[RMDB]
RNA sequence: GGGAACGACUCGAGUAGAGUCGAAAACGAACUUGCCCCGCGCCGCGCGGGCGACCCGCCCCGGCUGGUGGCCGACGCCUCGCGCAUCGUGGACCAACUGGGGUUUGCGCCCAAGUUCACCGACCUGCAUCGUCGCUAUCUUCGGAUAGCGACGAUGAAAAGAAACAACAACAACAAC
Reactivity to 2A3 in 0.01 (KOAc 150mM, MgCl2 10mM, bicine 150mM(pH8.5), 24C), signal-to-noise 1, nucleotides 027 to 126: c120g030a030a000c060u010u110g060c040c000c000c000g000c010g040c000c110g060c040g000c040g010g000g000c030g010a060c050c070c000g010c000c010c000c040g000g050c040u000g030g010u050g030g090c030c000g040a040c010g000c000c040u250c130g100c020g000c110a030u000c030g080u210g030g020a000c000c020a000a020c000u030g020g040g000g010u010u000u120g090c100g000c010c020c010a000a010g030u020u030c040a060c070c030g060a050c020c000u070g000